RNA sequence: GGGAACGACUCGAGUAGAGUCGAAAAGAUUAACUGACAUGUCGAAAAGUUUUUCUUACUACUUUUUGAGGAAUGACUGUACCUCAUCUGCUUAUUAGUAAGAUAUACAUAUCAAGCGGAUAAUUCGAUUAUACGACGUGUUCGCACGUCGUAUAAUAAAAGAAACAACAACAACAAC
Reactivity to 2A3 in 0.01 (KOAc 150mM, MgCl2 10mM, bicine 150mM(pH8.5), 24C), signal-to-noise 6, nucleotides 027 to 126: g050a030u120u090a040a030c020u040g110a020c050a110u240g070u220c150g070a100a060a020a020g010u070u010u000u030u000c020u030u030a050c040u030a030c000u050u140u070u080u170g000a000g040g060a060a100u190g080a090c080u090g080u120a100c000c000u010c020a030u000c000u010g030c020u070u130a050u020u030a180g030u020a060a000g050a060u120a010u010a140c030a020u090a010u120c040a030a040g030c030g030g010a030u050a100a130u220u140c040g010
Reactivity to DMS in 0.01 (KOAc 150mM, MgCl2 10mM, bicine 150mM(pH8.5), 24C), signal-to-noise 4, nucleotides 027 to 126: g000a090u020u010a030a040c060u020g020a160c040a050u030g010u040c130g010a060a050a080a030g020u020u010u000u000u010c010u000u000a110c070u010a060c130u010u000u000u000u040g000a010g010g010a090a080u010g010a130c110u000g000u010a160c020c050u000c040a020u010c050u010g010c070u000u010a070u010u000a120g010u000a020a070g000a070u040a100u000a030c030a170u000a050u010c110a010a060g020c010g030g010a050u010a030a090u010u040c100g000
Conditions: 150 mM KOAc, 10 mM MgCl2 and 150 mM bicine (pH 8.5), 24 C. This 177-nucleotide RNA was probed chemically with 2A3 and DMS. DMS adducts were read by reverse transcription with MarathonRT. For DMS, 6,615 sequencing reads were counted. For 2A3 the reverse transcriptase was SuperScript II with manganese. Reactivities are given for positions 27 through 126.